[RMDB]
RNA sequence: GGGAACGACUCGAGUAGAGUCGAAAAGUGAGUCCUUACGAGGACUCACAAUAAAUUCAGCGGUAAUUCGAGCCCAAAUAUUACCGCUGAUGGGCUCGAAAAAGCUGCUACGUACGCGUAGCAGCAAGUCACCGCUACUGUUCGCAGUAGCGGUGACAAAAGAAACAACAACAACAAC
Reactivity to 2A3 in 0.01 (KOAc 150mM, MgCl2 10mM, bicine 150mM(pH8.5), 24C), signal-to-noise 2, nucleotides 027 to 126: g000u000g000a000g000u000c000c020u030u030a120c290g110a030g000g000a000c000u000c000a000c000a000a000u000a000a070a000u100u060c000a020g010c010g040g000u040a020a020u090u050c040g060a110g020c000c000c000a060a140a000u200a010u040u080a110c000c010g000c030u000g000a010u000g010g010g050c010u070c110g000a080a030a020a010a000g000c000u000g000c020u000a000c000g000u000a020c240g000c000g130u000a020g050c010a000g000c000a000a000
The record gives the reactivity of an RNA of 177 nucleotides to 2A3. 2A3 adducts were read by reverse transcription with SuperScript II with manganese. Reactivities are given for positions 27 through 126.